[RMDB]
RNA sequence: GGGAACGACUCGAGUAGAGUCGAAAAUUGAGCAGGAGAUGGAUUUGACGUCUGUUUCAACCAUGGGGACACUGAGCAUGUGGGGGUCUCCUGACACGGCACCAGUCAUGUGCAUUGAUGUCAUCCAAAUCCCUCAUGGUUUCGACCAUGAGGGAUUAAAAGAAACAACAACAACAAC
Reactivity to 2A3 in 0.01 (KOAc 150mM, MgCl2 10mM, bicine 150mM(pH8.5), 24C), signal-to-noise 1, nucleotides 027 to 126: u050u070g020a000g000c010a000g000g110a060g030a110u080g090g000a070u060u070u080g070a040c020g080u080c040u040g060u030u080u090c020a040a040c000c050a070u020g000g000g000g070a010c020a020c100u030g000a050g060c030a100u040g000u050g000g010g010g010g000u000c020u020c060c000u010g020a000c030a000c060g000g000c030a030c020c030a010g130u080c000a000u120g000u060g040c060a040u030u090g040a090u040g080u030c010a010u010c010c000a040
Reactivity to DMS in 0.01 (KOAc 150mM, MgCl2 10mM, bicine 150mM(pH8.5), 24C), signal-to-noise 2, nucleotides 027 to 126: u000u000g010a130g020c040a050g000g010a060g010a130u020g000g000a080u000u000u000g030a080c140g020u010c070u000g030u000u000u000c050a060a140c110c080a150u000g000g000g010g020a060c040a030c040u000g000a090g000c060a040u000g000u000g000g000g030g030g030u000c030u000c010c050u000g000a080c090a130c220g000g020c300a040c030c080a080g000u000c080a060u000g010u000g000c030a100u010u000g010a100u000g030u000c040a040u010c050c020a030

The record gives the reactivity of an RNA of 177 nucleotides to 2A3 and DMS.
For 2A3, 1,328 sequencing reads were counted.
2A3 adducts were read by reverse transcription with SuperScript II with manganese.
For DMS the reverse transcriptase was MarathonRT.